Structure probing data (2A3 and DMS) for a 177-nucleotide construct. The reactions ran in a buffer of 150 mM KOAc, 10 mM MgCl2 and 150 mM bicine (pH 8.5), at 24 C. Source: RMDB libraries RFM100 and RFMREP, as collected in RNAgym. For 2A3, 2,759 sequencing reads were counted. For DMS the reverse transcriptase was MarathonRT. Reactivities are given for positions 27 through 126.

[RMDB]
RNA sequence: GGGAACGACUCGAGUAGAGUCGAAAAUCAGGACUGAAGGAGAGCGAAUCCCGGGGCUCGGUGUGGAGAAGGAGGUGCCAAGUAGCCCCGUUGCGGAGAGUGUGUCAGCCCCAUCGCAGUGCACCUCUGGUACUAGUCGAUUCGUCGACUAGUACCAAAAAGAAACAACAACAACAAC
Reactivity to 2A3 in 0.01 (KOAc 150mM, MgCl2 10mM, bicine 150mM(pH8.5), 24C), signal-to-noise 4, nucleotides 027 to 126: u110c020a050g020g060a030c020u070g020a050a000g040g010a040g000a000g010c050g020a050a040u060c010c000c020g000g000g010g000c020u010c050g080g000u110g020u050g060g140a120g030a150a090g050g060a010g020g030u020g000c000c000a070a020g040u100a020g070c000c040c010c010g020u030u110g010c000g010g040a010g000a030g030u040g010u010g040u040c010a020g030c000c000c000c000a060u100c030g050c060a010g010u020g100c000a000c020c010u000c010
Reactivity to DMS in 0.01 (KOAc 150mM, MgCl2 10mM, bicine 150mM(pH8.5), 24C), signal-to-noise 4, nucleotides 027 to 126: u020c060a100g010g030a070c060u000g000a150a080g000g000a110g020a070g050c050g000a120a080u040c040c060c010g000g000g000g000c010u010c040g000g020u020g020u000g010g020a110g000a060a110g010g030a010g000g000u010g050c020c030a060a120g020u050a030g000c010c010c000c010g000u020u010g010c140g000g000a050g010a060g000u000g010u010g000u000c080a080g000c020c010c020c060a090u030c050g010c100a080g010u020g000c000a010c000c000u000c010